[RMDB]
RNA sequence: GGGAACGACUCGAGUAGAGUCGAAAAUUUUAACUUAACAAAACGGACUUAAAUACCUACAGCUGGUCCUCAUAGGUGUUCCAUUGCAGUGCACUUUAGUGCCCUGGAUGGCACCUGGCCACCUGUCAAAGUGGUUAAUCUUCGGAUUAACCACUUUAAAAGAAACAACAACAACAAC
Reactivity to DMS in 0.01 (KOAc 150mM, MgCl2 10mM, bicine 150mM(pH8.5), 24C), signal-to-noise 4, nucleotides 027 to 126: u000u010u000u010a010a080c090u000u010a090a140c090a060a070a090a100c140g010g000a120c140u010u010a020a050a060u020a100c010c020u020a020c010a020g010c180u000g000g020u010c010c300u030c200a120u020a000g000g020u000g020u030u070c000c000a000u010u000g000c010a010g000u000g000c000a010c010u030u050u020a140g040u000g000c000c100c000u010g010g000a010u000g010g000c000a000c000c000u000g000g000c000c000a010c200c010u000g000u000c090
Reactivity to 2A3 in 0.01 (KOAc 150mM, MgCl2 10mM, bicine 150mM(pH8.5), 24C), signal-to-noise 2, nucleotides 027 to 126: u040u030u010u040a070a040c030u100u090a060a020c050a040a100a040a040c080g040g060a030c030u130u150a040a030a050u120a150c010c010u030a000c000a010g000c010u000g000g020u100c020c060u110c070a200u200a060g000g000u020g050u120u080c030c000a010u030u030g100c010a010g010u000g030c020a000c020u160u270u300a050g000u020g000c010c000c010u000g000g020a000u000g000g000c000a000c000c000u010g010g000c010c000a000c010c000u030g030u040c090